Annotation:
An RNA of 177 nucleotides, treated with 2A3 and DMS and read out base by base. Values cover nucleotides 27 to 126. 2A3 adducts were read by reverse transcription with SuperScript II with manganese. It was measured as part of the RMDB library TTRDEL. For DMS the reverse transcriptase was MarathonRT.
[RMDB]
RNA sequence: GGGAACGACUCGAGUAGAGUCGAAAAGAUAUGGACUGGGACAUGAGAUGGAUCGGAAACGAUCCCUCUCAACAGCCCACGUCCUAAGUCAAACUAUGUAACUCAGGUUCGCCUGAGUUACAUAGAACUUUAGUCAUGAGUUCGCUCAUGACUAAAGAAAAGAAACAACAACAACAAC
Reactivity to 2A3 in 0.01 (KOAc 150mM, MgCl2 10mM, bicine 150mM(pH8.5), 24C), signal-to-noise 3, nucleotides 027 to 126: g020a000u070a020u150g000g000a000c000u000g000g000g020a020c030a220u070g000a020g000a000u020g000g000a000u000c010g010g030a060a040a010c010g010a000u000c000c000c000u010c000u010c010a000a010c050a040g070c000c000c000a000c120g000u000c000c000u010a110a010g050u010c050a010a060a100c010u000a000u000g000u010a000a000c010u000c010a010g050g030u070u110c200g140c030c000u000g000a000g000u000u000a000c000a000u000a000g000a000a000
Reactivity to DMS in 0.01 (KOAc 150mM, MgCl2 10mM, bicine 150mM(pH8.5), 24C), signal-to-noise 6, nucleotides 027 to 126: g010a060u000a280u010g000g010a010c010u010g010g000g000a030c070a260u000g000a010g010a020u000g000g000a000u000c000g010g000a080a090a130c000g000a010u000c000c000c030u000c000u000c000a010a030c260a150g000c000c000c000a010c210g000u000c000c010u000a020a090g010u000c040a120a100a300c000u000a010u000g000u000a000a000c000u000c000a010g000g000u000u010c250g020c010c000u000g000a010g000u000u000a000c000a010u000a000g000a070a110